[RMDB]
An RNA of 177 nucleotides, treated with DMS and 2A3 and read out base by base. Reactivities are given for positions 27 through 126. The data come from the RNA Mapping Database (RMDB), library RFMREP. For DMS the reverse transcriptase was MarathonRT. The reactions ran in a buffer of 150 mM KOAc, 10 mM MgCl2 and 150 mM bicine (pH 8.5), at 24 C. 2A3 adducts were read by reverse transcription with SuperScript II with manganese.
RNA sequence: GGGAACGACUCGAGUAGAGUCGAAAAGUGUUCCACAACUUUCAGCGCGGGUGUGUCUUCUUUUCCUGCUUGAGAUAGCGCUAUGUCACUGUUCCUCAUUUGAAGAUUUGUUUUGAUCAAAAAUAUGCGUACAAUAAGUGUUCGCACUUAUUGUACGAAAAGAAACAACAACAACAAC
Reactivity to DMS in 0.01 (KOAc 150mM, MgCl2 10mM, bicine 150mM(pH8.5), 24C), signal-to-noise 6, nucleotides 027 to 126: g020u010g000u000u000c030c020a090c090a140a100c060u010u010u010c070a080g030c070g030c040g000g010g030u000g020u010g010u000c050u000u000c040u000u000u010u000c020c020u000g020c050u000u000g000a110g010a110u000a080g010c040g010c040u000a070u010g000u000c040a060c060u000g000u000u010c010c010u010c120a120u000u000u010g010a080a120g000a080u000u010u010g010u000u000u010u000g000a080u010c050a010a090a050a070a090u010a080u000g010
Reactivity to 2A3 in 0.01 (KOAc 150mM, MgCl2 10mM, bicine 150mM(pH8.5), 24C), signal-to-noise 5, nucleotides 027 to 126: g040u040g040u060u000c020c010a090c030a060a070c010u070u150u140c080a040g020c010g010c030g050g080g000u050g020u020g020u010c030u030u030c000u030u110u020u030c010c010u030g040c000u020u050g040a040g010a080u110a040g040c020g000c050u040a080u100g050u040c010a020c060u020g020u030u010c000c000u050c030a100u070u060u110g150a140a090g040a120u040u060u120g170u080u130u090u120g040a040u070c070a030a060a040a070a070u170a060u230g070